[RMDB]
RNA sequence: GGGAACGACUCGAGUAGAGUCGAAAAUUCUUCGGUCAACCUCCUAAGUUCCUCUUCUUCCUCCCUGCUGAGGUUCUUCCCUCCCCCGGCCAGCUGCUUCCUCUUGUUCUCGAGGGCCUUCCUUCGUCGGUGAUCCUGCCUCUCCUUGUCGGUGAAGCCUAUAGUUUAGCUUCGGCUAAACUAUAGGAAAAGAAACAACAACAACAAC
Reactivity to DMS in 0.01 (KOAc 150mM, MgCl2 10mM, bicine 150mM(pH8.5), 24C), signal-to-noise 1, nucleotides 027 to 156: u010u000c040u000u010c050g050g040u020c040a120a120c050c020u000c030c030u010a090a160g010u000u000c020c040u000c040u000u000c030u000u000c030c030u000c030c000c020u010g020c070u010g010a120g020g020u000u000c090u010u010c030c000c000u000c030c000c030c010c040g030g010c050c050a090g020c020u000g000c050u000u010c050c010u000c010u010u000g020u000u000c030u000c010g010a150g020g020g030c070c030u020u000c010c000u000u000c070g010u010c040g020g030u010g000a080u000c010c030u000g020c000c020u000c000u010c040c030u000u000g030u000c020g000g000u000g000a130a200g020
Reactivity to 2A3 in 0.01 (KOAc 150mM, MgCl2 10mM, bicine 150mM(pH8.5), 24C), signal-to-noise 1, nucleotides 027 to 156: u120u040c030u070u060c040g000g010u050c030a030a030c030c020u050c020c020u080a110a070g020u050u050c000c000u040c050u070u040c010u090u060c000c020u020c000c020c010u010g020c020u020g000a010g020g000u060u020c000u060u070c000c000c010u010c030c000c000c010c000g000g020c000c010a010g020c020u050g010c000u080u030c010c010u040c000u070u090g060u160u060c030u020c070g050a040g010g020g000c010c000u070u090c040c000u030u060c020g040u010c030g020g040u050g010a040u050c000c000u010g010c000c020u020c000u000c000c010u020u050g060u050c020g050g000u070g040a030a030g010